[RMDB]
RNA sequence: GGGAACGACUCGAGUAGAGUCGAAAACGUCCGGACGCAAUAUGGGAUAGGGAAGUGUCAUGCCUGGGGGCAUCUCCCGAGAUUUACUAGGCUGGUCAAACUCCGCGCCGACCUUCUUGGGCGUGGAUAAGACGAGAUCUUAAAUACGAAGGGAACAUCUCAAUACGACGUUCGCGUCGUAUUGAGAAAAAGAAACAACAACAACAAC
Reactivity to 2A3 in 0.01 (KOAc 150mM, MgCl2 10mM, bicine 150mM(pH8.5), 24C), signal-to-noise 1, nucleotides 027 to 156: c070g030u030c020c000g060g150a080c030g050c050a040a070u120a170u230g080g050g040a060u100a070g030g020g000a030a020g000u000g000u000c000a010u020g000c000c000u000g030g000g000g000g000c000a000u000c000u000c030c000c010g000a000g000a140u180u210u070a050c000u000a000g000g000c000u010g000g000u000c000a040a040a040c000u030c000c000g000c000g000c000c000g010a050c000c000u040u030c010u220u300g000g000g000c000g020u000g010g020a030u010a000a020g000a000c010g000a000g000a020u020c090u080u300a050a050a050u060a000c010g010a020a000g000g000g000a000a040c060a050